[RMDB]
RNA sequence: GGGAACGACUCGAGUAGAGUCGAAAAAAUACUUGCCCAGUCUAGUUGCGGUAGAAGAAAACAAAUUCAAGGUUACUUAGAUUCCACUAGAACUAUUAUCAGGUAUUCACUGGAGGUGAGACCAUUGGUCAACUGCUAGCUUCGGCUAGCAGUUGACAAAAGAAACAACAACAACAAC
Reactivity to 2A3 in 0.01 (KOAc 150mM, MgCl2 10mM, bicine 150mM(pH8.5), 24C), signal-to-noise 1, nucleotides 027 to 126: a000a000u100a100c080u220u140g080c000c000c000a000g000u000c000u000a000g160u120u000g000c220g000g000u100a000g050a020a070g230a000a040a040a000c100a000a030a000u300u300c120a120a000g170g000u040u000a000c000u000u000a000g040a000u090u000c000c000a020c000u000a000g000a040a040c060u140a120u240u000a160u260c100a000g000g000u000a080u020u010c080a080c180u110g040g000a170g110g140u040g000a000g080a080c170c220a170u000u170g040

An RNA of 177 nucleotides, treated with 2A3 and read out base by base.